[RMDB]
RNA sequence: GGGAACGACUCGAGUAGAGUCGAAAACGGCUGAAACGGCAGUCCUCCCAGGAGCAAGUAAGGAGGGGAUGAGUUGAGGUUCAACCCUCCUAAGGACGCUUAGUAGAAUCCCCCUAAAUACAAAAGCAACGGACAUUAUAUUCGUAUAAUGUCCGUUAAAAGAAACAACAACAACAAC
Reactivity to 2A3 in 0.01 (KOAc 150mM, MgCl2 10mM, bicine 150mM(pH8.5), 24C), signal-to-noise 6, nucleotides 027 to 126: c020g040g000c010u040g050a090a060a050c030g100g000c010a020g030u040c000c010u010c020c010c020a040g060g050a050g010c050a090a000g050u210a090a020g010g020a000g030g030g010g030a130u100g010a050g060u090u120g100a090g060g160u030u020c010a010a050c000c000c000u000c000c000u010a010a020g020g010a000c040g000c040u030u030a030g010u020a020g070a080a110u060c020c000c000c000c000u070a060a120a070u200a070c090a040a120a040a010g050c020
Reactivity to DMS in 0.01 (KOAc 150mM, MgCl2 10mM, bicine 150mM(pH8.5), 24C), signal-to-noise 7, nucleotides 027 to 126: c160g000g000c030u000g000a060a060a090c130g000g010c020a040g020u020c030c120u000c010c010c010a110g000g000a050g000c060a100a120g010u020a120a040g020g010a030g000g000g010g010a160u010g000a050g010u020u010g020a120g030g000u020u020c020a020a160c010c010c000u000c010c000u000a010a040g000g010a170c130g000c010u000u010a140g000u000a040g000a140a100u010c020c000c010c010c040u020a070a110a120u030a030c140a050a070a070a070g020c130